Chemical mapping of a 177-nucleotide RNA with DMS and 2A3.
RNA sequence: GGGAACGACUCGAGUAGAGUCGAAAAGAUCUGGUCCAUUGGUGAAAGUUUGCGGCUUGCAGAGCACAGAGGCCGCAGAAUGUGCUCUAGAUUCCGAUGCUUCUCACGGAGUAUUUCCGUUAUGAUAAUCCGUAUGAGCUUUCGAGCUCAUACGGAUAAAAGAAACAACAACAACAAC
Reactivity to DMS in 0.01 (KOAc 150mM, MgCl2 10mM, bicine 150mM(pH8.5), 24C), signal-to-noise 2, nucleotides 027 to 126: g000a050u000c020u000g000g020u000c070c010a020u000u000g020g070u010g000a060a080a110g020u000u020u010g000c070g010g010c120u010u010g010c050a040g000a120g030c040a030c050a060g000a070g000g010c040c030g000c050a000g000a050a080u010g000u030g010c030u000c030u010a090g020a090u000u000c020c020g030a080u010g000c090u000u020c040u000c140a070c060g000g030a020g030u010a020u000u030u000c010c040g010u000u000a050u030g000a150u040a060
Reactivity to 2A3 in 0.01 (KOAc 150mM, MgCl2 10mM, bicine 150mM(pH8.5), 24C), signal-to-noise 4, nucleotides 027 to 126: g070a040u010c010u040g000g010u020c030c060a080u030u160g160g020u070g100a130a080a070g030u040u030u060g080c030g000g010c020u050u070g010c150a070g030a040g190c050a010c050a130g110a040g090g000c020c010g010c030a000g020a000a040u060g010u060g040c000u000c010u020a060g000a110u140u020c010c010g080a080u080g020c010u040u010c010u020c020a030c050g000g010a080g080u160a150u100u150u000c010c000g050u100u070a100u240g190a050u060a150
The RNA was probed in 150 mM KOAc, 10 mM MgCl2 and 150 mM bicine (pH 8.5) at 24 C. For DMS, 2,700 sequencing reads were counted. DMS adducts were read by reverse transcription with MarathonRT.